RNA sequence: GGGAACGACUCGAGUAGAGUCGAAAACCGCUGACUUGGUGCGCUCGCCUACAGGUAUGCAGUCAGGUGCGAGCGGGAAGAUUGGGACUACAGCGUCAGACGUGUUCGAGCGACUUCGUGCAGUGGAUACCAGGUGUGCUUUCGAGCACACCUGGUAAAAAGAAACAACAACAACAAC
Reactivity to DMS in 0.01 (KOAc 150mM, MgCl2 10mM, bicine 150mM(pH8.5), 24C), signal-to-noise 2, nucleotides 027 to 126: c020c010g000c070u030g010a020c050u070u010g070g000u030g000c020g000c030u000c070g050c090c060u020a100c150a150g010g010u010a030u070g000c030a070g020u000c120a060g010g000u020g000c100g010a040g020c070g000g000g020a100a080g010a300u000u000g000g000g000a070c020u010a050c150a170g000c030g010u050c020a020g000a110c000g040u020g000u000u000c120g000a140g010c020g000a070c060u000u000c000g010u000g040c000a030g020u000g000g000a290
Reactivity to 2A3 in 0.01 (KOAc 150mM, MgCl2 10mM, bicine 150mM(pH8.5), 24C), signal-to-noise 3, nucleotides 027 to 126: c000c000g000c060u020g010a090c030u020u060g020g090u190g050c020g000c020u050c040g000c000c050u040a030c020a030g020g070u100a050u100g060c040a020g080u100c050a030g030g050u030g040c040g070a080g020c060g000g040g000a060a010g050a070u160u180g060g010g000a030c050u120a110c150a000g010c030g070u070c030a000g000a070c040g090u090g020u030u040c020g000a000g010c050g000a050c010u070u050c040g060u040g010c020a020g050u020g020g100a030

An RNA of 177 nucleotides, treated with DMS and 2A3 and read out base by base. For DMS, 2,269 sequencing reads were counted. DMS (dimethyl sulfate) methylates the pairing face of unpaired adenines and cytosines. It was measured as part of the RMDB library OK1LIB. High 2A3 reactivity points to a flexible backbone, as in loops and unpaired stretches.